Source information:
Source: RMDB library RNAMAK, as collected in RNAgym. This 207-nucleotide RNA was probed chemically with DMS and 2A3.
[RMDB]
RNA sequence: GGGAACGACUCGAGUAGAGUCGAAAAACCUGACUUCGGUCAGGUCUUGCGGGGUCCAUCCGAGGAGCAGACAUGCUCUGAAGCCUCCACGGAGCAACAGCUGCUCUACCCACCGGAUCGGACGGAGGCACCCAGUUAUUGCUUAUUCGUAAGCAAAAACUUUGAAUCUGUUCGCAGAUUCAAAGUUAAAAGAAACAACAACAACAAC
Reactivity to DMS in 0.01 (KOAc 150mM, MgCl2 10mM, bicine 150mM(pH8.5), 24C), signal-to-noise 2, nucleotides 027 to 156: a020c000c030u000g000a030c000u000u000c280g080g000u000c000a040g030g020u000c000u000u010g020c050g020g020g000g020u000c010c000a100u000c000c000g010a210g000g000a070g010c020a010g000a060c110a300u000g010c010u020c020u020g000a090a080g020c090c060u000c030c030a300c030g030g000a050g030c010a060a090c060a120g010c070u000g010c010u000c010u000a030c040c000c060a300c090c000g010g010a100u010c080g050g000a100c020g000g000a090g000g020c050a200c010c000c000a270g000u000u010a010u010u000g000c010u010u000a230u000u000c040g020u000a090a060g000c070a060a040a080
Reactivity to 2A3 in 0.01 (KOAc 150mM, MgCl2 10mM, bicine 150mM(pH8.5), 24C), signal-to-noise 3, nucleotides 027 to 156: a000c000c010u000g010a000c000u020u070c300g080g000u010c010a000g000g010u030c040u030u070g020c030g020g100g050g030u030c000c000a010u000c010c000g010a080g020g000a000g000c000a000g060a170c010a100u070g010c000u010c000u030g090a130a030g120c020c030u050c050c020a030c020g010g000a010g000c010a010a090c020a150g060c010u000g000c010u000c000u030a050c050c060c040a060c040c010g020g010a020u060c180g040g000a000c010g040g090a040g030g030c010a020c010c000c000a040g030u100u150a140u160u060g000c010u010u020a030u140u090c220g110u090a010a000g000c010a010a020a110
2A3 adducts were read by reverse transcription with SuperScript II with manganese.
The reactions ran in a buffer of 150 mM KOAc, 10 mM MgCl2 and 150 mM bicine (pH 8.5), at 24 C.
For DMS, 2,671 sequencing reads were counted.